[RMDB]
RNA sequence: GGGAACGACUCGAGUAGAGUCGAAAAAAAAGAUAUGGACCUCCUACCCACCAUCAAUAUCUGCAUCGAUCGAGCGUCGGAAACGACGCUCGGGAGCAGAUUUGAUGAGGGAGGUCCUAAGUCAAAAUCUAGAUGGUUAGUUCGCUAACCAUCUAGAAAAAGAAACAACAACAACAAC
Reactivity to DMS in 0.01 (KOAc 150mM, MgCl2 10mM, bicine 150mM(pH8.5), 24C), signal-to-noise 1, nucleotides 027 to 126: a060a150a130a100g030a080u040a130u030g000g000a030c000c030u020c000c010u000a140c030c000c000a300c070c000a010u020c000a020a030u000a020u000c010u000g070c020a300u020c220g040a050u010c000g000a000g030c000g000u010c000g030g000a050a080a180c000g020a010c010g010c000u000c000g000g000g010a020g030c000a000g020a000u000u050u000g010a020u000g000a070g070g000g010a000g020g000u000c010c000u000a000a020g010u010c140a060a060a180a150